RNA sequence: GGGAACGACUCGAGUAGAGUCGAAAAGAUAUGGACUUUGACAUGUCCUGCGUAGGAUAGUGUCGGAAACGACACCUGGACAACAGCAAAGGUCCUAAGUCAAAAGACUAGUGUUCGCACUAGUCAACCCGUGUUAUUACUUCGGUAAUAACACGGGAAAAGAAACAACAACAACAAC
Reactivity to 2A3 in 0.01 (KOAc 150mM, MgCl2 10mM, bicine 150mM(pH8.5), 24C), signal-to-noise 4, nucleotides 027 to 126: g030a010u070a030u140g000g010a010c040u000u000u040g050a080c030a080u070g010u000c020c000u010g000c190g250u260a180g170g250a240u110a260g010u010g000u000c000g020g040a080a090a040c000g010a000c000a010c000c000u010g010g000a010c020a200a020c020a140g070c030a030a040a050g130g040u020c000c000u030a170a020g080u050c020a060a030a080a070g000a000c000u000a000g000u010g040u080u120c300g010c100a010c020u000a000g000u000c000a000a010
Reactivity to DMS in 0.01 (KOAc 150mM, MgCl2 10mM, bicine 150mM(pH8.5), 24C), signal-to-noise 3, nucleotides 027 to 126: g010a040u000a300u010g010g000a110c010u000u000u010g010a100c130a260u010g000u000c000c010u000g000c170g000u020a090g000g020a130u010a070g020u000g000u010c020g000g000a060a040a180c000g010a010c000a000c010c030u000g000g010a030c010a020a080c260a170g010c050a030a010a030g010g000u000c000c000u010a050a120g000u000c010a050a080a120a170g000a010c000u000a000g010u000g010u010u010c260g000c010a010c010u000a010g010u000c000a060a060